[RMDB]
RNA sequence: GGGAACGACUCGAGUAGAGUCGAAAAGAGAGCUGCUUCGGCAGCUCUCCGUCAGGUAGUUCCUAUCUCAAUUACGUGUAGUGGCCAACGUCCGGAUAGGAAGAGAGCCCUGCUUCGGCAGGGCUAAUUCUUAUCACCCGUUCGCGGGUGAUAAGAAAAAAGAAACAACAACAACAAC
Reactivity to DMS in 0.01 (KOAc 150mM, MgCl2 10mM, bicine 150mM(pH8.5), 24C), signal-to-noise 2, nucleotides 027 to 126: g020a030g000a020g010c000u000g010c010u000u020c220g070g030c000a010g000c000u000c000u000c000c010g010u000c090a130g030g030u010a110g010u000u000c000c000u000a050u000c040u000c060a120a140u000u000a050c060g030u010g020u010a100g010u020g000g000c040c000a130a050c030g020u020c260c160g000g000a020u000a010g010g000a040a070g010a160g000a010g000c000c000c000u000g010c000u000u010c220g010g010c010a010g000g010g010c000u000a000a010